[RMDB]
RNA sequence: GGGAACGACUCGAGUAGAGUCGAAAAGAUAUGGAAGUUUCUUUCCUGGAGCGAGUAGGGAGCUAUGUGUCGGAAACGACAUUAUAGCAUCGAUCUAUCCGCUCCAGGAAAGAAACUUCCUAAGUCAGGACUGAUAAUUGUUCGCAAUUAUCAGUCCAAAAGAAACAACAACAACAAC
Reactivity to DMS in 0.01 (KOAc 150mM, MgCl2 10mM, bicine 150mM(pH8.5), 24C), signal-to-noise 1, nucleotides 027 to 126: g010a020u010a300u010g010g000a040a010g000u000u000u000c000u000u010u000c000c010u000g000g000a020g030c000g000a030g020u000a000g000g000g000a010g080c000u000a000u000g010u000g000u000c040g010g010a180a090a220c010g030a030c000a000u000u020a000u000a010g010c000a300u000c170g000a050u000c000u000a010u000c030c000g010c000u000c000c000a000g000g000a000a000a020g000a000a010a010c000u000u000c000c010u000a020a060g040u000c050a120

An RNA of 177 nucleotides, treated with DMS and read out base by base. DMS adducts were read by reverse transcription with MarathonRT. For DMS, 1,549 sequencing reads were counted. It was measured as part of the RMDB library TTRINS.